Source: RMDB library M2RFPK, as collected in RNAgym. The record gives the reactivity of an RNA of 207 nucleotides to 2A3 and DMS. The reactions ran in a buffer of 150 mM KOAc, 10 mM MgCl2 and 150 mM bicine (pH 8.5), at 24 C.

RNA sequence: GGGAACGACUCGAGUAGAGUCGAAAAUGGUACUAUGAAUUGAUGCAAGGUGUGGAGCGACCUUAAACAGUUCUGGUGGUGCUCUGAAUGGAGUGCUCUACUGAGAUUAUAAAAUAGAAGGUAAGCUGAAGGGGAAAUGAGUUCGCUCAUUUCCCAACUCAUCUAUUUGCUUCGGCAAAUAGAUGAGAAAAGAAACAACAACAACAAC
Reactivity to 2A3 in 0.01 (KOAc 150mM, MgCl2 10mM, bicine 150mM(pH8.5), 24C), signal-to-noise 9, nucleotides 027 to 156: u000g020g020u060a040c040u070a080u150g030a060a040u100u040g040a050u070g070c040a030a010g020g000u030g030u070g040g010a010g010c010g010a020c000c000u060u100a100a110a020c020a050g010u040u030c020u030g040g020u020g010g020u020g010c010u010c020u090g150a110a080u230g020g000a020g000u030g010c010u010c020u050a030c020u040g030a020g010a080u060u090a050u190a110a080a050a020u100a030g060a060a010g050g010u080a030a030g030c070u060g140a070a070g000g000g000g000a000a000a010u000g000a000g030u040u090c180g030c080u000c000a000u000u000u000c000c000c000a000a000
Reactivity to DMS in 0.01 (KOAc 150mM, MgCl2 10mM, bicine 150mM(pH8.5), 24C), signal-to-noise 1, nucleotides 027 to 156: u000g060g000u000a070c060u010a010u040g000a120a120u000u010g020a090u000g030c130a020a040g000g030u000g020u020g000g020a120g010c070g010a080c030c010u000u010a070a120a110c030a080g010u010u000c010u000g000g030u000g020g030u000g000c000u000c030u000g000a070a190u010g000g000a090g010u000g010c020u020c020u000a080c000u000g010a060g010a120u000u010a110u010a030a080a090a050u010a080g000a060a100g030g000u010a060a090g000c030u000g040a070a120g020g020g040g020a030a010a010u000g020a070g040u000u010c290g060c010u000c010a010u000u010u000c010c000c000a000a060
The DMS profile rests on 2,371 reads.
Values cover nucleotides 27 to 156.